[RMDB]
RNA sequence: GGGAACGACUCGAGUAGAGUCGAAAAUCUAUUCAGGAGAAAUAAUGGCAUGCUCACAGUGAAGACAUGGCAUGGUGAAUUUGUCAUACACAACACCACACAGUUGAGAAUUCACUUCAUCCAAGGAGUGUUCGCGAGAAUUCGUUCUCGCGAACACAAAAGAAACAACAACAACAAC
Reactivity to 2A3 in 0.01 (KOAc 150mM, MgCl2 10mM, bicine 150mM(pH8.5), 24C), signal-to-noise 2, nucleotides 027 to 126: u020c000u010a050u170u010c050a100g000g050a020g040a010a070a010u150a000a050u050g000g160c050a010u000g000c040u060c000a040c020a110g190u060g130a030a030g020a090c010a000u020g010g130c050a070u020g020g000u040g000a010a040u010u000u070g090u080c020a010u100a120c000a000c000a050a110c000a060c050c040a060c040a020c040a050g020u030u080g050a030g000a050a020u020u010c000a000c000u010u060c070a120u060c040c000a030a000g090g060a090